[RMDB]
RNA sequence: GGGAACGACUCGAGUAGAGUCGAAAACGCCGUCAGCGCCACUCGAUCGGUCCACAGCAGGUGGCCGAUCUGGUGUGCGAUGGUCCAACCCGGCGCAGGUGUCGGAUCGGCCCAGCGAUCCGCUGGCUGUGAGAACACCUUUCGAGGUGUUCUCACAAAAAGAAACAACAACAACAAC
Reactivity to 2A3 in 0.01 (KOAc 150mM, MgCl2 10mM, bicine 150mM(pH8.5), 24C), signal-to-noise 2, nucleotides 027 to 126: c070g000c040c000g040u040c020a010g030c010g040c010c020a000c000u020c010g010a010u000c000g010g060u080c070c020a030c040a090g300c130a080g020g290u000g030g000c000c000g030a000u000c000u000g000g000u030g150u130g000c000g010a000u010g000g040u000c040c020a090a140c050c000c000g000g030c060g010c040a070g000g100u060g060u190c020g000g000a010u000c000g030g000c030c000c010a040g020c000g020a090u040c010c050g000c000u010g010g000c030
Reactivity to DMS in 0.01 (KOAc 150mM, MgCl2 10mM, bicine 150mM(pH8.5), 24C), signal-to-noise 2, nucleotides 027 to 126: c120g030c010c030g000u030c060a060g010c000g020c030c020a040c000u000c280g000a000u010c000g010g040u130c010c020a000c010a270g050c280a120g000g030u000g000g040c030c010g010a000u020c010u000g000g000u000g000u040g000c000g000a040u020g010g000u000c020c160a040a200c120c080c020g010g010c030g030c160a050g060g030u040g000u040c010g020g010a020u000c020g040g010c040c020c010a050g000c000g000a000u010c040c050g000c000u000g000g030c080